[RMDB]
RNA sequence: GGGAACGACUCGAGUAGAGUCGAAAAGGUGUGGAGACCCGGUUUGUGGGCGCCCGGCAGAUGUUCGCCUCGCUGCGCGACCAGUUUCUGACUCUGCCAGACGGCGUGCAGGUGUGGCCCGCACACGGCUGUAUAGCAAUUUCGAUUGCUAUACAGCAAAAGAAACAACAACAACAAC
Reactivity to DMS in 0.01 (KOAc 150mM, MgCl2 10mM, bicine 150mM(pH8.5), 24C), signal-to-noise 7, nucleotides 027 to 126: g000g010u000g020u000g000g010a110g010a150c050c010c030g020g020u000u000u010g030u010g010g010g020c030g000c070c030c070g000g000c040a040g010a080u000g010u010u000c070g010c060c030u000c170g010c070u000g010c110g010c060g000a100c110c030a080g010u000u010u010c060u000g000a070c040u010c060u000g010c010c010a060g010a050c090g010g010c010g020u000g010c030a020g000g010u010g020u010g010g010c010c010c020g000c010a030c040a050c090g010
Reactivity to 2A3 in 0.01 (KOAc 150mM, MgCl2 10mM, bicine 150mM(pH8.5), 24C), signal-to-noise 4, nucleotides 027 to 126: g060g020u030g010u030g040g040a110g070a200c020c030c010g050g050u080u090u120g100u050g030g060g000c000g020c000c020c000g020g000c020a020g020a090u090g030u140u080c020g010c010c000u050c060g100c060u080g000c070g010c020g090a210c040c000a020g020u040u110u060c040u020g020a020c010u040c040u130g000c010c000a020g010a060c030g000g000c020g010u030g010c010a010g010g060u110g040u090g050g030c000c010c010g010c000a000c000a000c010g060
Structure probing data (DMS and 2A3) for a 177-nucleotide construct. Conditions: 150 mM KOAc, 10 mM MgCl2 and 150 mM bicine (pH 8.5), 24 C. The DMS profile rests on 17,360 reads. The 2A3 profile rests on 7,872 reads.